Chemical mapping of a 207-nucleotide RNA with 2A3 and DMS. The reactions ran in a buffer of 150 mM KOAc, 10 mM MgCl2 and 150 mM bicine (pH 8.5), at 24 C. High 2A3 reactivity points to a flexible backbone, as in loops and unpaired stretches.
RNA sequence: GGGAACGACUCGAGUAGAGUCGAAAAUCGGGACCUGCUGCUCUGGGCGGAAGAGUCUUCUGACACUUCUAGCCUAUUCAGCUUCGCGUCCUUGAGGCCUGGCGUAACGCGGCUCUUGCCACCAGGAUGCCUCCGCUAGUCGAGCGGACUUGGUCUCCUUUGGUGAGGACUUCGGUCCUCACCAAAGAAAAGAAACAACAACAACAAC
Reactivity to 2A3 in 0.01 (KOAc 150mM, MgCl2 10mM, bicine 150mM(pH8.5), 24C), signal-to-noise 3, nucleotides 027 to 156: u140c020g000g000g000a000c010c050u090g010c000u000g000c010u020c010u010g010g010g000c010g000g000a010a000g010a020g000u000c020u300u210c210u300g020a000c020a010c020u010u000c000u020a240g000c010c000u010a000u050u100c000a000g000c000u000u000c060g030c060g000u020c000c000u010u080g010a010g000g000c000c000u000g010g000c040g070u210a250a080c240g010c000g080g000c010u010c030u040u100g060c070c040a100c060c010a030g060g040a090u240g000c010c040u010c010c000g000c030u050a070g170u280c100g070a010g000c000g000g010a020c020u040u150g010g000u030c010u000c000
Reactivity to DMS in 0.01 (KOAc 150mM, MgCl2 10mM, bicine 150mM(pH8.5), 24C), signal-to-noise 1, nucleotides 027 to 156: u000c080g030g000g000a070c010c030u010g040c010u000g000c030u000c040u000g000g020g010c010g010g020a000a040g020a160g010u000c010u000u010c300u050g040a040c000a140c020u010u000c020u000a070g050c000c010u000a020u020u000c010a120g010c030u000u010c090g050c180g030u000c000c010u010u000g010a110g040g010c010c000u140g030g020c040g020u000a080a110c100g000c080g010g030c090u000c070u010u010g010c020c020a130c000c020a090g000g000a110u010g020c020c010u000c040c020g020c000u000a190g000u000c200g000a170g030c010g040g000a070c110u010u010g010g000u000c020u000c040